[RMDB]
RNA sequence: GGGAACGACUCGAGUAGAGUCGAAAAUCUAUUUGACAGAGUCUGGUGGUACUAUGGAGUCCAUCAAGAACAGCCAACAAUCACUAAGUGGUUCCAUGAAAGAGACUACUGGAAUUUUAAUAGAGGAGCUCAACUCCGUAUUCGUACGGAGUUGAGCAAAAGAAACAACAACAACAAC
Reactivity to 2A3 in 0.01 (KOAc 150mM, MgCl2 10mM, bicine 150mM(pH8.5), 24C), signal-to-noise 2, nucleotides 027 to 126: u010c000u000a020u020u070u040g190a200c120a130g070a010g080u000c030u000g000g000u060g040g010u060a040c000u040a040u040g010g010a040g020u030c000c000a000u030c040a060a000g300a280a160c080a000g130c060c000a060a030c120a090a150u220c090a050c270u110a060a060g000u000g070g020u000u000c000c000a070u070g050a070a000a000g190a000g000a010c000u040a120c000u000g000g090a040a020u050u140u030u040a000a010u040a000g000a000g020g040a010